[RMDB]
RNA sequence: GGGAACGACUCGAGUAGAGUCGAAAAUGCUGGCCGACAAUAGCCCGACGCUCCCGAACCACUACGCGUAUGGCGACGACGGGACGGCGGUAAGUGAGUCUGAUACGGCCCUUGGCAACGAACUUGUCAACGUGUCGCUUGACGAGAUACUGAUACAAGUAUAGCAUCCCUUCGGGGAUGCUAUACUAAAAGAAACAACAACAACAAC
Reactivity to 2A3 in 0.01 (KOAc 150mM, MgCl2 10mM, bicine 150mM(pH8.5), 24C), signal-to-noise 1, nucleotides 027 to 156: u060g000c010u050g050g020c000c040g020a080c060a080a140u060a150g090c090c000c030g060a010c010g210c170u000c000c000c030g000a000a060c030c030a040c050u280a070c060g040c040g120u220a090u190g070g000c080g000a060c020g030a010c020g030g000g000a000c000g010g040c000g000g000u110a080a000g010u010g060a060g010u040c040u030g020a060u060a180c030g010g040c030c000c000u080u050g000g000c000a020a040c090g000a060a050c000u000u000g000u040c000a000a000c080g030u040g040u140c000g020c240u010u020g000a000c000g000a010g010a080u190a180c000u030g070a110u110a140c080a020

The record gives the reactivity of an RNA of 207 nucleotides to 2A3. Conditions: 150 mM KOAc, 10 mM MgCl2 and 150 mM bicine (pH 8.5), 24 C. Source: RMDB library OK3TST, as collected in RNAgym. 2A3 adducts were read by reverse transcription with SuperScript II with manganese.